[RMDB]
RNA sequence: GGGAACGACUCGAGUAGAGUCGAAAAUUCCAUUUGAGUAUCCUGAAAACGGGCUUUUCAGCAUGGAACGUACAUAUUAAAUAGUAGGAGUGCAUAGUGGCCCGUAUAGCAGGCAUUGACAUUCCUGAAAACGUGAAAAGGUUCGCCUUUUCACGAACCUAUUAUAAAGCUUCGGCUUUAUAAUAGGAAAAGAAACAACAACAACAAC
Reactivity to DMS in 0.01 (KOAc 150mM, MgCl2 10mM, bicine 150mM(pH8.5), 24C), signal-to-noise 1, nucleotides 027 to 156: u000u010c000c010a140u010u000u030g010a070g000u000a080u020c020c000u090g000a090a050a120a150c060g000g020g020c050u000u000u010u000c040a240g000c080a030u020g010g010a090a070c050g030u000a080c110a120u000a180u020u010a150a090a220u000a190g000u010a020g000g000a190g030u000g020c010a180u020a180g020u000g020g070c040c020c000g060u000a010u000a120g020c100a020g040g040c080a120u000u000g000a120c090a080u000u000c010c000u020g000a100a080a120a180c040g010u000g040a030a000a030a040g010g060u000u000c300g040c000c000u020u000u000u000c020a000c000g000a000a010
Reactivity to 2A3 in 0.01 (KOAc 150mM, MgCl2 10mM, bicine 150mM(pH8.5), 24C), signal-to-noise 2, nucleotides 027 to 156: u020u010c010c010a020u190u060u030g060a030g020u110a050u120c000c000u000g020a020a100a000a000c000g000g070g000c040u180u120u060u110c060a040g000c000a030u030g020g060a140a020c020g050u060a050c030a030u180a060u120u300a150a220a100u160a070g030u030a000g050g080a060g010u010g000c000a000u040a150g090u030g040g020c010c010c030g000u000a010u010a000g000c000a000g030g000c000a020u040u050g000a010c020a060u070u090c000c010u020g040a090a070a000a060c010g000u010g010a000a000a000a000g010g000u030u070c140g100c010c000u000u000u010u000c000a000c000g000a000a000
Chemical mapping of a 207-nucleotide RNA with DMS and 2A3. 2A3 adducts were read by reverse transcription with SuperScript II with manganese. Conditions: 150 mM KOAc, 10 mM MgCl2 and 150 mM bicine (pH 8.5), 24 C.